[RMDB]
RNA sequence: GGGAACGACUCGAGUAGAGUCGAAAAGCGAAUGGGACCCAGAACUCUCUUUAGCUUCCGAAAGAGAAGCAAGAGAAAACUGGCUCUCCCUUAGCCAUCCGAGUGGACGUCUGUCCUCCUUCGGAUGCCUUAUGGUGAGCUUCGGCUCACCAUAAGGAAAAGAAACAACAACAACAAC
Reactivity to 2A3 in 0.01 (KOAc 150mM, MgCl2 10mM, bicine 150mM(pH8.5), 24C), signal-to-noise 1, nucleotides 027 to 126: g000c020g020a020a050u030g000g020g000a030c050c010c000a020g020a040a020c000u000c000u000c000u040u060u130a040g000c000u000u000c020c000g230a250a130a060g120a000g000a000a010g000c000a000a000g000a000g000a000a020a010a010c000u000g000g000c000u000c000u000c010c000c000u000u000a010g010c000c010a020u000c000c000g000a020g020u020g020g000a030c010g150u160c240u300g020u000c010c020u010c020c060u040u070c000g010g010a010u000g020
Reactivity to DMS in 0.01 (KOAc 150mM, MgCl2 10mM, bicine 150mM(pH8.5), 24C), signal-to-noise 1, nucleotides 027 to 126: g000c030g000a100a080u010g020g000g020a080c120c010c000a030g020a210a300c300u000c000u000c000u000u000u000a120g020c020u000u020c000c000g000a030a140a300g000a150g010a020a020g050c010a060a010g000a020g010a000a030a120a230c010u000g000g020c020u000c020u000c010c010c000u000u000a170g010c040c010a020u000c000c020g000a010g020u000g020g000a020c020g020u010c250u030g020u000c020c010u000c170c060u000u000c010g000g000a020u000g000